[RMDB]
Chemical mapping of a 207-nucleotide RNA with DMS and 2A3. For DMS the reverse transcriptase was MarathonRT. The DMS profile rests on 3,478 reads. The RNA was probed in 150 mM KOAc, 10 mM MgCl2 and 150 mM bicine (pH 8.5) at 24 C. Reactivities are given for positions 27 through 156.
RNA sequence: GGGAACGACUCGAGUAGAGUCGAAAAACUGCCAUACGUGGCAGAAACACGCCUUACCAGGAAUAAACAGCGUGUCUAAAAAACAGUCCUUCAUACCUGAUCUGGAGGGUAGAUCAGGAAUACUAAAAAAAUCGGGUGAAGUUCGCUUCACCCGAAACGUUAUGUAAAGGUUCGCCUUUACAUAACGAAAAGAAACAACAACAACAAC
Reactivity to DMS in 0.01 (KOAc 150mM, MgCl2 10mM, bicine 150mM(pH8.5), 24C), signal-to-noise 2, nucleotides 027 to 156: a110c020u000g010c020c000a110u000a090c130g060u000g000g000c000a040g010a070a040a010c010a020c050g000c000c080u010u020a090c060c060a230g010g020a200a130u010a010a050a110c030a070g010c010g030u000g010u000c010u010a000a060a000a080a070a040c070a090g030u000c030c020u030u000c060a160u000a110c010c000u000g000a010u000c000u000g040g010a090g020g020g020u010a030g020a030u000c010a000g000g020a070a050u010a120c060u000a000a000a060a070a040a080a070u000c010g080g020g020u000g000a030a030g000u000u000c300g020c010u010u000c000a010c000c000c000g000a000a010a030
Reactivity to 2A3 in 0.01 (KOAc 150mM, MgCl2 10mM, bicine 150mM(pH8.5), 24C), signal-to-noise 6, nucleotides 027 to 156: a010c000u000g000c000c000a020u030a060c180g090u040g000g000c000a000g010a010a010a000c000a000c000g020c000c010u050u050a080c040c060a040g000g080a100a110u100a110a140a030c040a020g000c000g010u010g010u030c090u080a050a050a020a010a000a000c050a020g060u030c020c010u060u110c020a060u080a180c000c000u000g000a000u010c000u020g060g050a070g040g050g040u050a010g000a000u010c010a000g010g000a000a010u070a040c050u140a040a030a020a030a020a020a120u030c000g000g010g000u000g000a010a000g010u040u130c180g040c090u000u000c000a000c000c000c000g000a000a000a000